[RMDB]
RNA sequence: GGGAACGACUCGAGUAGAGUCGAAAAGAAGCUGGGGCUGGAUCUGGAGUCGGCCGAAUUUCAGGACCUGAACAAACACAUCGCCGAGGUGAUGCUGCUGUCGGCGAUGAAGACCAGCAACGCGCUGACAUGAAAGUGUCUUCGGACACUUUCAUGUAAAAGAAACAACAACAACAAC
Reactivity to 2A3 in 0.01 (KOAc 150mM, MgCl2 10mM, bicine 150mM(pH8.5), 24C), signal-to-noise 5, nucleotides 027 to 126: g120a030a010g020c040u030g010g000g060g000c010u010g050g060a300u010c020u050g050g040a120g030u020c000g050g050c010c010g010a060a070u090u150u140c070a140g020g030a200c020c020u140g020a090a060c040a060a100a010c060a010c000a090u000c000g000c010c010g020a020g000g020u070g060a300u200g070c080u090g010c000u080g220u300c000g000g000c000g000a000u010g000a010a000g010a010c000c010a000g000c010a050a040c030g030c040g000c040u020g010
Reactivity to DMS in 0.01 (KOAc 150mM, MgCl2 10mM, bicine 150mM(pH8.5), 24C), signal-to-noise 3, nucleotides 027 to 126: g000a120a080g000c010u010g000g000g000g010c020u010g020g000a120u000c000u000g010g020a090g020u010c010g000g000c050c030g010a070a080u030u010u020c080a060g000g000a140c090c010u000g000a090a050c170a070a110a130c190a270c000a000u000c000g010c000c010g030a300g010g000u000g000a070u030g000c090u010g000c000u000g010u020c020g010g000c000g000a010u000g010a050a030g000a050c030c010a020g000c000a050a040c050g010c060g000c010u000g000